[RMDB]
RNA sequence: GGGAACGACUCGAGUAGAGUCGAAAAUUGUCGAACAGGGUCUGAACCGCGCCUUCGGGGUCCUUGACCUUCUGCUUCUGGAAUUCCUUGAACAUGCCUUCCAGCAUGGUCAGGUCGGCACCGCCGAACGAUACGUGCGUUUCGACGCACGUAUCGUAAAAGAAACAACAACAACAAC
Reactivity to DMS in 0.01 (KOAc 150mM, MgCl2 10mM, bicine 150mM(pH8.5), 24C), signal-to-noise 2, nucleotides 027 to 126: u000u010g010u000c080g020a040a080c090a090g000g000g010u000c010u000g000a100a080c050c030g020c070g000c220c140u010u010c040g040g000g040g040u000c020c040u000u000g000a030c030c010u000u000c080u000g010c120u000u010c030u000g000g000a070a110u000u010c010c010u000u010g000a030a030c020a010u000g000c000c040u010u010c210c200a170g010c030a010u000g000g000u000c020a020g000g000u000c030g000g010c060a170c150c100g020c010c010g000a050
Reactivity to 2A3 in 0.01 (KOAc 150mM, MgCl2 10mM, bicine 150mM(pH8.5), 24C), signal-to-noise 1, nucleotides 027 to 126: u070u060g070u070c020g000a010a010c010a010g030g000g050u000c020u050g030a050a000c020c010g080c070g040c080c070u150u190c030g010g000g000g000u000c020c000u050u140g010a020c020c000u100u000c020u040g060c030u030u000c040u060g030g110a050a100u100u030c000c000u020u040g000a010a000c020a020u020g010c000c000u110u060c030c010a000g000c020a030u010g010g030u020c020a000g020g050u000c000g000g070c070a130c150c120g090c020c010g020a020